[RMDB]
This 177-nucleotide RNA was probed chemically with DMS and 2A3. It was measured as part of the RMDB library OK2TRN. DMS (dimethyl sulfate) methylates the pairing face of unpaired adenines and cytosines. For 2A3 the reverse transcriptase was SuperScript II with manganese. The RNA was probed in 150 mM KOAc, 10 mM MgCl2 and 150 mM bicine (pH 8.5) at 24 C. As a SHAPE reagent, 2A3 marks flexible, mostly unpaired nucleotides at the ribose 2'-OH.
RNA sequence: GGGAACGACUCGAGUAGAGUCGAAAAUAAUGGCCUCAAUAUCCGUCCUGAUGGCAUCUACAUUGAUGGGACUUUUGGUCGCGGUGGUCACUCACGUCUGAUCCUCUCGCAGCUUGGCGAAGAGGGGCCAUGACAAUCGUUUCGACGAUUGUCAUGGAAAAGAAACAACAACAACAAC
Reactivity to DMS in 0.01 (KOAc 150mM, MgCl2 10mM, bicine 150mM(pH8.5), 24C), signal-to-noise 3, nucleotides 027 to 126: u000a100a110u010g030g000c010c020u010c060a070a040u000a100u010c050c040g020u000c020c070u010g010a110u000g000g000c030a060u000c050u010a100c200a110u020u000g000a060u020g000g000g000a060c040u010u000u000u000g000g010u010c050g000c040g020g000u010g010g010u000c040a060c070u010c070a080c140g000u000c030u000g010a070u000c000c000u020c010u000c000g010c030a140g000c250u010u000g020g020c020g010a030a070g000a030g020g000g010g010
Reactivity to 2A3 in 0.01 (KOAc 150mM, MgCl2 10mM, bicine 150mM(pH8.5), 24C), signal-to-noise 4, nucleotides 027 to 126: u180a000a100u090g030g030c020c000u050c030a040a020u090a060u180c010c020g060u030c010c020u060g040a080u080g020g060c010a040u000c010u070a120c030a240u090u170g020a040u070g070g060g080a090c000u080u100u040u100g060g010u050c050g000c050g060g020u050g020g010u030c010a010c030u070c010a100c060g080u030c040u030g040a090u030c000c000u000c010u000c020g000c020a090g070c120u170u300g150g020c020g010a110a020g000a040g020g020g000g000